[RMDB]
RNA sequence: GGGAACGACUCGAGUAGAGUCGAAAAUUUGUGAGGAAUAUAGGGGAUCCAGCAGUUGCCGCAUUGGCAGAUAUUAAGAGAUUCAUUACAGUGAACCUGAUAGACCGCGGAGUUCUAUAUAGGAUUAGUAGUACUAUGACUUCGGUCAUAGUACUACAAAAGAAACAACAACAACAAC
Reactivity to 2A3 in 0.01 (KOAc 150mM, MgCl2 10mM, bicine 150mM(pH8.5), 24C), signal-to-noise 1, nucleotides 027 to 126: u120u050u100g060u040g050a060g050g000a100a020u090a020u070a100g010g000g050g000a010u030c000c000a000g070c000a040g050u080u050g010c010c010g050c150a260u010u140g040g000c030a000g060a040u090a020u050u150a080a070g030a000g010a010u080u000c030a030u060u110a040c010a010g070u010g060a030a030c000c000u000g010a010u010a010g020a010c000c000g010c100g110g000a070g030u050u000c040u010a070u010a010u070a070g020g010a040u050u040a050
Reactivity to DMS in 0.01 (KOAc 150mM, MgCl2 10mM, bicine 150mM(pH8.5), 24C), signal-to-noise 3, nucleotides 027 to 126: u000u000u010g020u000g010a090g020g000a110a070u010a080u010a080g010g000g000g000a060u000c040c010a070g000c020a060g010u000u000g000c030c020g020c210a120u010u010g010g020c030a060g010a100u000a070u000u000a060a110g000a070g020a050u010u000c010a020u010u000a090c250a120g010u010g010a040a090c030c010u000g020a070u000a050g000a040c050c020g010c150g040g000a100g000u010u000c020u000a050u010a080u010a040g010g010a100u010u010a100
Chemical mapping of a 177-nucleotide RNA with 2A3 and DMS. Reactivities are given for positions 27 through 126. Conditions: 150 mM KOAc, 10 mM MgCl2 and 150 mM bicine (pH 8.5), 24 C. The DMS profile rests on 2,422 reads. 2A3 adducts were read by reverse transcription with SuperScript II with manganese.